Overview: This 177-nucleotide RNA was probed chemically with 2A3 and DMS. 2A3 adducts were read by reverse transcription with SuperScript II with manganese.
[RMDB]
RNA sequence: GGGAACGACUCGAGUAGAGUCGAAAAAUGGUUGUCGUAGGAUAUGUAGGAUAUUCCUACAUGAGGAUCACCCAUGUUCGCAUGGAAGAAGGACAGAAGGACGAUAACCACAAAAAUAAAAAUAAAACAACGUGAUUCUGUUCGCAGAAUCAUGUUGAAAAGAAACAACAACAACAAC
Reactivity to 2A3 in 0.01 (KOAc 150mM, MgCl2 10mM, bicine 150mM(pH8.5), 24C), signal-to-noise 9, nucleotides 027 to 126: a000u070g000g000u010u000g010u000c010g000u010a030g060g070a080u040a010u170g000u010a010g000g040a070u040a160u300u210c000c000u000a000c000a000u020g020a050g090g040a070u050c020a050c010c000c000a010u010g030u020u050c240g010c120a010u030g020g020a060a120g050a070a060g140g010a010c040a040g100a080a030g120g030a010c000g000a000u010a010a000c030c020a010c030a030a090a020a010a000u300a050a080a030a010a010u220a030a080a010a020
Reactivity to DMS in 0.01 (KOAc 150mM, MgCl2 10mM, bicine 150mM(pH8.5), 24C), signal-to-noise 8, nucleotides 027 to 126: a150u010g000g010u000u000g010u000c000g010u000a030g000g000a120u020a000u000g010u000a010g000g010a180u050a130u040u010c000c000u000a010c000a010u010g020a080g010g010a120u000c040a120c140c000c010a030u010g000u010u030c160g030c020a030u010g000g000a080a060g020a110a100g010g010a050c050a090g010a140a160g010g000a030c010g000a020u000a000a010c010c000a040c090a010a060a070a080a070u070a030a050a080a080a110u030a080a110a100a130